An RNA of 177 nucleotides, treated with 2A3 and DMS and read out base by base.
[RMDB]
RNA sequence: GGGAACGACUCGAGUAGAGUCGAAAAACAAAGUGAUCGAAAGAGCAAUGUGUAACUCAUCAUCCUAGCGAAUGGUUGGGCUCGAAAGAUCGAGUGUUACCAUCACAUCCCGGACGCUAGAAAAAAAUCAUUAAGGGUGGUUCGCCACCCUUAAUGAAAAAGAAACAACAACAACAAC
Reactivity to 2A3 in 0.01 (KOAc 150mM, MgCl2 10mM, bicine 150mM(pH8.5), 24C), signal-to-noise 2, nucleotides 027 to 126: a000c070a010a060a030g070u040g020a050u080c080g080a110a090a060g010a020g010c020a050a160u120g040u050g020u230a070a060c020u000c030a090u060c000a050u050c030c010u020a010g040c000g060a090a030u020g000g020u000u030g060g080g000c010u000c030g050a120a120a040g170a090u090c020g000a000g030u150g200u110u060a040c010c000a020u010c030a020c000a090u050c040c000c020g000g000a010c020g000c030u000a020g000a030a010a010a010a000a000a030
Reactivity to DMS in 0.01 (KOAc 150mM, MgCl2 10mM, bicine 150mM(pH8.5), 24C), signal-to-noise 3, nucleotides 027 to 126: a080c070a030a070a130g030u000g000a040u000c060g030a060a090a080g000a060g000c040a090a100u000g020u010g010u000a100a050c060u000c030a070u000c100a050u000c030c010u000a030g020c020g010a180a030u000g000g020u010u000g010g000g010c000u000c000g020a020a140a130g010a140u000c000g000a010g020u000g010u000u010a030c010c010a000u010c130a050c120a090u000c000c000c010g000g010a220c010g000c010u000a030g020a000a000a050a040a090a040a050
It was measured as part of the RMDB library M2PK90. For DMS the reverse transcriptase was MarathonRT. For 2A3, 1,441 sequencing reads were counted. For DMS, 2,168 sequencing reads were counted. Conditions: 150 mM KOAc, 10 mM MgCl2 and 150 mM bicine (pH 8.5), 24 C.